[RMDB]
RNA sequence: GGGAACGACUCGAGUAGAGUCGAAAAAGGAGUCCUUUCGAGGACUCCUACUAGUGGCGCCGACCACUUAAAAACAACGGCCAAACAUAAAUGUCAGCAAAAAACGCCUAGCUUUCGAGCUAGGCAAUAUAUGCCAAUACUUCGGUAUUGGCAUAUAAAAAGAAACAACAACAACAAC
Reactivity to DMS in 0.01 (KOAc 150mM, MgCl2 10mM, bicine 150mM(pH8.5), 24C), signal-to-noise 1, nucleotides 027 to 126: a110g010g000a040g010u000c010c000u000u000u010c160g050a000g000g000a030c010u000c000c000u000a040c010u000a000g010u010g000g010c010g010c010c000g000a220c000c010a000c000u020u000a010a000a020a010a010c240a010a020c020g010g000c020c260a170a070a090c070a040u020a060a050a100u000g040u000c050a080g010c110a020a040a040a080a070a090c300g010c000c000u000a000g000c000u000u000u010c160g000a000g000c000u000a000g000g000c010a000a000

The data come from the RNA Mapping Database (RMDB), library M2PK50. This 177-nucleotide RNA was probed chemically with DMS. Conditions: 150 mM KOAc, 10 mM MgCl2 and 150 mM bicine (pH 8.5), 24 C. Reactivities are given for positions 27 through 126.